[RMDB]
RNA sequence: GGGAACGACUCGAGUAGAGUCGAAAAUCAUCAAGAAGUAGGCUUAGGCCAAUUGCUUGGUGGUGAAAGUAGAGGGAAGGUAGCACUUCGACGCCUCUAAGUACGCUGUGGGAGUACUGCUUAAAUCAAAAGCACAGCGACUUCGGUCGCUGUGCAAGACAGUUGUUAGCUUCGGCUAACAACUGUCAAAAGAAACAACAACAACAAC
Reactivity to 2A3 in 0.01 (KOAc 150mM, MgCl2 10mM, bicine 150mM(pH8.5), 24C), signal-to-noise 1, nucleotides 027 to 156: u040c010a000u000c000a000a000g010a110a020g010u090a030g040g000c040u110u130a150g190g010c000c040a050a130u040u020g010c000u000u000g010g000u020g000g000u060g030a150a050a010g060u080a000g000a010g070g020g000a010a030g060g020u070a020g010c050a020c070u050u000c020g050a060c100g080c010c000u030c020u030a020a050g040u050a000c060g000c120u140g040u030g110g040g030a040g010u010a020c010u000g010c000u030u050a060a060a080u190c050a080a030a020a000g000c000a000c000a000g040c000g000a000c000u030u030c100g110g000u000c000g000c000u000g010u000g010c000a000a000
Chemical mapping of a 207-nucleotide RNA with 2A3.
The RNA was probed in 150 mM KOAc, 10 mM MgCl2 and 150 mM bicine (pH 8.5) at 24 C.
Values are in units of 0.01, from 0 to 300, in steps of 10.